[RMDB]
The record gives the reactivity of an RNA of 207 nucleotides to 2A3. Values are in units of 0.01, from 0 to 300, in steps of 10. For 2A3, 378 sequencing reads were counted.
RNA sequence: GGGAACGACUCGAGUAGAGUCGAAAAUGGGUUUCAGCCACAAGAAUCAGGUCAGCUUGACCCACAUGUAACAGAUCGAUUUGAGACCGUGCGUGAAAGUCGUGAAAGCAACAACAAUCGGUUCGUAGCACUAUCAAUCAAUACUGGAGAAUUGACCAGGCAGUCAACUAUUCGUAGUUGACUGCCUAAAAGAAACAACAACAACAAC
Reactivity to 2A3 in 0.01 (KOAc 150mM, MgCl2 10mM, bicine 150mM(pH8.5), 24C), signal-to-noise 1, nucleotides 027 to 156: u060g000g000g040u040u300u110c070a040g000c000c000a030c120a040a040g120a040a170u260c080a080g040g040u020c020a000g000c030u120u090g050a060c040c120c050a040c040a090u300g050u160a080a030c030a000g000a050u050c050g040a020u020u080u100g040a040g020a040c050c120g020u010g030c000g000u150g020a100a130a000g080u080c000g000u110g120a070a140a000g040c120a000a040c080a040a000c000a020a270u160c000g040g000u000u000c010g030u110a100g010c030a000c120u220a140u010c000a030a030u040c030a030a030u060a290c020u020g020g050a120g010a070a040u120u000g050a060c050c040